RNA sequence: GGGAACGACUCGAGUAGAGUCGAAAAGAUAUGGAUUGGGCCAGUGCCAGCGUCCACUCGGAAACGAGUGGUACGCGGUAAUACUGGUUAAUCCUAAGUCAAACCCACCACCUUCGGGUGGUGGGAAGGUCCUACUAUUGUUCGCAAUAGUAGGACCAAAAGAAACAACAACAACAAC
Reactivity to 2A3 in 0.01 (KOAc 150mM, MgCl2 10mM, bicine 150mM(pH8.5), 24C), signal-to-noise 2, nucleotides 027 to 126: g010a000u060a040u110g000g010a000u020u060g160g110g020c000c030a010g000u010g100c120c130a120g030c030g010u000c010c000a010c010u010c000g000g030a070a090a080c000g000a000g000u010g000g000u010a010c000g000c020g010g000u040a080a020u070a050c000u010g000g040u010u010a000a000u000c000c000u010a120a010g060u040c010a050a030a300c000c000c020a010c000c000a000c000c000u090u170c300g170g000g000u010g020g000u000g000g000g000a000a020
Reactivity to DMS in 0.01 (KOAc 150mM, MgCl2 10mM, bicine 150mM(pH8.5), 24C), signal-to-noise 2, nucleotides 027 to 126: g010a040u000a300u000g000g000a000u000u000g020g030g000c010c000a010g030u000g030c110c030a100g060c010g000u010c000c010a010c000u000c000g020g010a130a070a190c010g010a030g010u000g000g000u010a000c000g040c010g010g030u010a070a190u010a270c000u000g000g020u000u010a000a010u000c000c030u010a050a190g010u000c010a120a180a160c010c010c000a010c000c000a010c000c000u000u010c220g030g000g030u000g000g040u010g000g000g010a020a000
The record gives the reactivity of an RNA of 177 nucleotides to 2A3 and DMS. For 2A3, 5,442 sequencing reads were counted. Values cover nucleotides 27 to 126. DMS (dimethyl sulfate) methylates the pairing face of unpaired adenines and cytosines. The data come from the RNA Mapping Database (RMDB), library TTRDES.